[RMDB]
RNA sequence: GGGAACGACUCGAGUAGAGUCGAAAAGAAAGAAAGAACAGCUGUUGUUUGUACUGGACCCUGAAUUGGAAACAGUAACUUGGAUUCUGUAACACUUCAUGGGUCCCGUAGUGACAACUAUGCUGAAGGUACGGCGUUCAUUCGUGAACGCCGUACCAAAAGAAACAACAACAACAAC
Reactivity to 2A3 in 0.01 (KOAc 150mM, MgCl2 10mM, bicine 150mM(pH8.5), 24C), signal-to-noise 2, nucleotides 027 to 126: g140a000a020a030g160a030a230a020g030a170a030c010a020g030c000u020g000u000u000g000u010u060u120g150u040a060c000u030g000g000a000c000c000c000u000g020a000a000u010u000g040g030a000a300a000c000a050g030u140a010a050c100u160u150g040g050a210u290u000c000u010g000u020a050a040c000a000c020u000u000c000a140u200g000g000g000u020c000c000c000g000u010a020g030u000g050a010c030a000a000c000u040a050u300g000c010u030g020a030a010
About this RNA: This 177-nucleotide RNA was probed chemically with 2A3. The reactions ran in a buffer of 150 mM KOAc, 10 mM MgCl2 and 150 mM bicine (pH 8.5), at 24 C.